An RNA of 207 nucleotides, treated with 2A3 and DMS and read out base by base.
[RMDB]
RNA sequence: GGGAACGACUCGAGUAGAGUCGAAAAAACAAACAUCAAAUCGCAUAGCAAAGAGUCAAAAAAAUAGAGAGCUUUUCGAGACCUACCAAGGGUGAAGAGAUACCAUCCAAGGAGCUGAAGAGAAAUCGAGAGCUCACGGCGUUCGCGCCGUGAGCAACAUGUAUAAACCGUUCGCGGUUUAUACAUGAAAAGAAACAACAACAACAAC
Reactivity to 2A3 in 0.01 (KOAc 150mM, MgCl2 10mM, bicine 150mM(pH8.5), 24C), signal-to-noise 4, nucleotides 027 to 156: a000a000c120a050a080a000c070a090u130c050a060a090a040u090c040g020c070a050u060a080g030c020a080a070a030g040a040g040u070c060a080a100a060a050a040a030a030u290a050g040a010g000a010g060c020u020u040u040u040c020g080a060g030a110c000c020u050a130c020c040a030a070g020g000g010u020g020a050a030g060a000g030a060u070a100c020c010a010u010c010c000a030a030g010g010a020g020c020u040g020a040a000g040a020g030a060a080a030u070c030g020a020g010a010g200c020u000c000a010c010g000g030c010g040u060u110c160g020c020g010c050c010g010u000g000a000g010c000a000a010
Reactivity to DMS in 0.01 (KOAc 150mM, MgCl2 10mM, bicine 150mM(pH8.5), 24C), signal-to-noise 1, nucleotides 027 to 156: a060a050c040a050a030a110c080a070u000c010a070a100a050u010c050g010c050a090u000a090g010c060a080a060a100g000a060g000u010c000a020a000a060a140a010a050a120u000a040g000a130g000a060g030c040u020u000u000u000c040g010a140g000a120c030c010u000a080c010c000a000a100g030g020g060u000g010a080a050g000a140g000a140u020a050c050c010a060u000c030c020a090a240g000g010a160g000c080u000g000a050a130g000a050g000a050a030a100u000c020g000a120g000a140g000c000u000c000a010c020g040g050c000g000u000u030c300g000c030g050c040c000g000u000g000a050g030c010a000a050

The DMS profile rests on 1,590 reads.
Source: RMDB library M2RFPK, as collected in RNAgym.